Source: RMDB library TTRDES, as collected in RNAgym. Structure probing data (2A3 and DMS) for a 177-nucleotide construct.
RNA sequence: GGGAACGACUCGAGUAGAGUCGAAAAGAUAUGGAAUCCAGGUGACAUGAACCAUCUCGGAAACGAGAUGAGUUCAACAGCACCCUGGAUUCCUAAGUCAAAGCGGAGGAAGUUCGCUUCCUCCGCACUACAUAUGGAAGUUCGCUUCCAUAUGUAGAAAAGAAACAACAACAACAAC
Reactivity to 2A3 in 0.01 (KOAc 150mM, MgCl2 10mM, bicine 150mM(pH8.5), 24C), signal-to-noise 6, nucleotides 027 to 126: g000a000u020a010u050g010g010a000a000u000c010c010a000g020g080u230g130a110c150a300u230g010a010a000c000c000a000u000c000u000c010g010g000a020a010a000c000g000a000g020a010u010g010a040g000u000u010c000a040a010c060a020g110c020a020c000c000c010u000g000g000a000u000u000c000c000u000a000a000g000u000c030a050a140a050g010c010g000g030a010g000g020a020a010g020u100u190c200g080c120u000u010c010c000u000c000c000g000c000a000
Reactivity to DMS in 0.01 (KOAc 150mM, MgCl2 10mM, bicine 150mM(pH8.5), 24C), signal-to-noise 7, nucleotides 027 to 126: g010a020u000a070u020g000g000a010a000u000c000c000a010g010g010u010g050a180c110a180u010g000a010a010c000c000a000u000c000u000c010g010g000a020a020a040c000g010a020g010a000u000g000a090g000u000u000c000a100a110c300a150g010c150a040c100c020c020u000g000g000a010u000u000c000c000u000a000a040g000u000c010a110a130a110g020c000g010g000a020g010g010a030a010g010u000u020c270g000c000u000u000c000c000u000c000c000g020c010a010
The DMS profile rests on 15,363 reads.